[RMDB]
RNA sequence: GGGAACGACUCGAGUAGAGUCGAAAAGUAAUCCCAGCAGAAACAGGGUUUUCACCCUUCCUUUCUUCUGGUUUCCUUCCUCUGCUUCAGCGGCCUCGCCCGGAGUCUUGACCAGCGCAGGUUCUGACGCGACCGGUGGCAUCACCGAGUUCGCUCACGACGAACUGUAGUUCGCUACAGUUCGUCGAAAAGAAACAACAACAACAAC
Reactivity to 2A3 in 0.01 (KOAc 150mM, MgCl2 10mM, bicine 150mM(pH8.5), 24C), signal-to-noise 2, nucleotides 027 to 156: g050u050a060a040u090c040c020c010a010g000c020a000g020a000a030a140c300a150g000g070g040u150u230u300u300c130a070c000c000c000u010u050c000c000u000u000u010c000u020u010c000u000g030g000u010u060u000c000c000u000u050c010c020u050c030u040g030c000u120u080c070a060g070c050g120g000c000c050u100c120g040c010c040c040g060g040a040g040u000c000u100u040g090a040c010c010a050g050c080g020c150a000g110g000u060u070c040u050g040a060c140g010c000g000a000c000c010g000g000u020g050g140c170a180u300c020a160c000c000g030a090g060u100u040c010g030c020u020c030a040